[RMDB]
RNA sequence: GGGAACGACUCGAGUAGAGUCGAAAAACAUGGGCCCGAGAUUAUGGUAUAGGCGUAGUAGCAAAUGUUGACGGGUACCGCACAAAGCUGACUGCUAUUAUUAAUGUAUUAAAUCAAGUCACUGAUACAUCUUCGAAACCAUUAACAGUGGCGCAUGAUUUGGUAUGGGAUUCGUCCCAUACCAAAUAAAAGAAACAACAACAACAAC
Reactivity to 2A3 in 0.01 (KOAc 150mM, MgCl2 10mM, bicine 150mM(pH8.5), 24C), signal-to-noise 4, nucleotides 027 to 156: a010c020a020u030g000g050g000c010c010c010g040a070g000a060u060u070a000u040g020g040u050a080u100a140g070g010c030g020u020a010g010u010a010g020c040a030a100a170u090g030u110u090g100a100c010g020g050g070u090a170c060c020g000c000a070c020a010a090a010g010c030u080g090a060c000u030g010c000u040a020u160u020a020u060u110a140a030u050g020u000a030u040u050a090a100a090u070c110a120a010g130u050c030a020c090u020g010a000u000a060c020a020u020c070u180u140c060g030a060a040a080c020c020a030u080u110a030a050c060a040g020u100g150g000c030g000c030a000u030g020
Reactivity to DMS in 0.01 (KOAc 150mM, MgCl2 10mM, bicine 150mM(pH8.5), 24C), signal-to-noise 2, nucleotides 027 to 156: a100c050a130u000g000g030g000c020c010c000g020a130g000a170u000u000a050u000g000g010u000a080u010a090g010g010c230g010u000a030g020u010a030g050c020a040a120a100u000g010u000u000g010a140c030g040g000g040u000a080c120c060g000c070a160c040a060a130a180g000c020u000g000a140c020u000g010c000u000a040u000u000a100u020u000a050a040u000g000u000a050u010u010a020a070a110u010c030a070a110g010u010c060a040c110u000g010a060u000a020c040a000u010c090u010u000c090g000a220a200a060c090c040a030u000u000a030a060c080a160g020u000g030g050c020g000c030a050u000g010